[RMDB]
RNA sequence: GGGAACGACUCGAGUAGAGUCGAAAAAGCCUUCGGUGCAUGCAGAGCUGCGGUUCGCUCUUAAAACUGGUCGCAGAUUCAUAAUUGCCAACGACAGCAAUUACGCUCUCGCUGCUUAAGCAGUGAGCCCUCUGCCCGGAUUUGUCUGUGGAUCCGGCCUUUGUAUGUCCUUCGGGACAUACAAAGGAAAAGAAACAACAACAACAAC
Reactivity to 2A3 in 0.01 (KOAc 150mM, MgCl2 10mM, bicine 150mM(pH8.5), 24C), signal-to-noise 2, nucleotides 027 to 156: a000g070c020c000u020u040c070g090g000u050g040c070a070u120g020c250a030g010a030g020c060u060g030c030g030g030u050u120c050g000c050u000c060u080u150a040a050a060a030c060u070g040g020u050c020g060c010a010g040a090u130u070c030a010u040a070a010u010u000g030c020c040a190a070c170g050a100c060a010g000c000a000a040u030u060a030c070g000c070u020c000u020c000g020c000u020g000c010u230u230a160a080g000c000a000g000u000g020a010g000c000c020c000u060c020u050g040c000c000c000g030g000a010u000u010u080g130u030c100u060g040u050g040g000a000u010c010c000g010g000
The record gives the reactivity of an RNA of 207 nucleotides to 2A3. The 2A3 profile rests on 819 reads. Source: RMDB library ARCHII, as collected in RNAgym. Conditions: 150 mM KOAc, 10 mM MgCl2 and 150 mM bicine (pH 8.5), 24 C.